[RMDB]
RNA sequence: GGGAACGACUCGAGUAGAGUCGAAAAUUUGUGCUAUCCAGUUAAUCAUGAGAAGAUAUCCUGUUUCUUACAAAUUAAUGGGACAAGGAGAUAAUCAAGUUUUAAUGAUAACAAUGAGAAGCUCCAGAUCACUAAAGCGAUUCGUCGCUUUAGUGAUAAAAGAAACAACAACAACAAC
Reactivity to DMS in 0.01 (KOAc 150mM, MgCl2 10mM, bicine 150mM(pH8.5), 24C), signal-to-noise 3, nucleotides 027 to 126: u040u020u030g040u010g020c020u020a070u000c000c050a080g020u000u000a050a080u000c010a050u000g000a100g000a060a070g000a090u010a090u010c030c000u010g010u010u000u010c000u020u010a090c130a080a070a130u060u010a070a070u040g020g000g000a030c090a050a070g000g000a040g000a030u020a160a110u010c030a050a170g000u020u000u000u040a070a100u010g000a030u020a000a020c020a030a140u000g000a090g010a060a090g000c010u010c040c030a190g010
Reactivity to 2A3 in 0.01 (KOAc 150mM, MgCl2 10mM, bicine 150mM(pH8.5), 24C), signal-to-noise 5, nucleotides 027 to 126: u060u010u100g060u040g020c000u020a100u110c000c030a000g000u010u030a220a100u020c000a000u040g090a010g020a220a020g010a020u030a040u030c000c000u000g030u040u070u010c020u010u080a080c040a060a170a110u170u140a060a100u170g000g020g010a020c030a090a100g050g010a050g010a050u180a050a080u090c000a010a070g020u010u000u050u140a120a060u050g070a050u040a030a000c070a080a190u150g010a040g000a170a020g010c000u000c030c010a050g010

The record gives the reactivity of an RNA of 177 nucleotides to DMS and 2A3. Values cover nucleotides 27 to 126. The reactions ran in a buffer of 150 mM KOAc, 10 mM MgCl2 and 150 mM bicine (pH 8.5), at 24 C. As a SHAPE reagent, 2A3 marks flexible, mostly unpaired nucleotides at the ribose 2'-OH.